Structure probing data (2A3 and DMS) for a 177-nucleotide construct. For 2A3 the reverse transcriptase was SuperScript II with manganese. The reactions ran in a buffer of 150 mM KOAc, 10 mM MgCl2 and 150 mM bicine (pH 8.5), at 24 C. Source: RMDB library M2PK50, as collected in RNAgym.

[RMDB]
RNA sequence: GGGAACGACUCGAGUAGAGUCGAAAACAAAGUCUGUUCGCAGACUUUGAAACCUGAUAUAAUCGUCAGGAAAGGAGAUUACACCUUCUUAAGCAGAUUAUAAAAGGACGCCGUUCGCGGCGUCCAACUAUCACCAUGAGUUCGCUCAUGGUGAUAGAAAAGAAACAACAACAACAAC
Reactivity to 2A3 in 0.01 (KOAc 150mM, MgCl2 10mM, bicine 150mM(pH8.5), 24C), signal-to-noise 2, nucleotides 027 to 126: c000a000a020a000g000u000c020u000g020u060u080c180g030c160a000g030a010c020u000u030u000g000a030a000a010c000c000u020g060a010u030a000u020a140a070u060c050g070u060c010a040g040g040a090a000a030g040g010a020g000a070u050u260a080c030a080c100c000u010u030c020u050u030a080a040g010c020a020g040a050u010u000a010u050a050a200a050a040g000g000a000c030g010c040c010g050u070u070c230g000c020g110g010c000g000u000c000c020a000a010
Reactivity to DMS in 0.01 (KOAc 150mM, MgCl2 10mM, bicine 150mM(pH8.5), 24C), signal-to-noise 1, nucleotides 027 to 126: c010a000a050a010g000u000c000u000g000u000u000c170g020c010a000g000a010c010u000u000u000g000a060a060a210c000c010u000g010a110u000a030u020a070a010u010c030g000u000c060a040g000g020a070a040a050g020g020a030g010a070u000u000a130c250a250c130c010u000u000c010u010u010a130a110g030c090a170g010a010u000u000a010u000a000a060a170a200g000g020a020c010g010c040c010g030u000u020c150g010c030g020g010c000g000u020c010c010a010a080